[RMDB]
RNA sequence: GGGAACGACUCGAGUAGAGUCGAAAAGAUAGGUAAGGAACAGAAGUGUUGCAUGUGCAAUAGACGCGCUGCAGCGUACUCUUCACCUCUGCAAUCUUAUGCCUGCUGGACUCAUUCCUGCGGUUAUUCAAAUCUUAUUGUUCGCAAUAAGAUUUGAAAAAGAAACAACAACAACAAC
Reactivity to DMS in 0.01 (KOAc 150mM, MgCl2 10mM, bicine 150mM(pH8.5), 24C), signal-to-noise 4, nucleotides 027 to 126: g010a080u000a110g000g010u000a060a080g020g010a110a140c110a040g010a040a020g010u010g010u000u010g000c000a020u020g020u000g000c200a060a090u000a060g010a080c070g010c010g030c170u000g020c200a140g000c010g010u010a090c040u000c060u010u000c050a040c000c010u000c020u000g000c020a040a030u000c020u000u000a070u010g010c020c000u000g010c010u000g000g000a280c150u010c060a160u000u000c020c000u000g030c120g000g020u000u000a060u000
Reactivity to 2A3 in 0.01 (KOAc 150mM, MgCl2 10mM, bicine 150mM(pH8.5), 24C), signal-to-noise 5, nucleotides 027 to 126: g020a030u090a030g020g030u080a140a130g040g020a200a050c040a060g070a090a010g050u040g010u140u020g000c010a030u190g010u000g000c020a020a040u030a110g060a040c020g040c010g030c150u230g020c050a030g000c010g010u080a180c010u010c010u010u020c000a010c040c000u010c010u010g000c010a020a040u010c010u040u040a020u100g020c000c000u020g000c020u030g030g050a040c010u010c050a060u040u030c010c000u020g040c060g140g000u080u100a070u130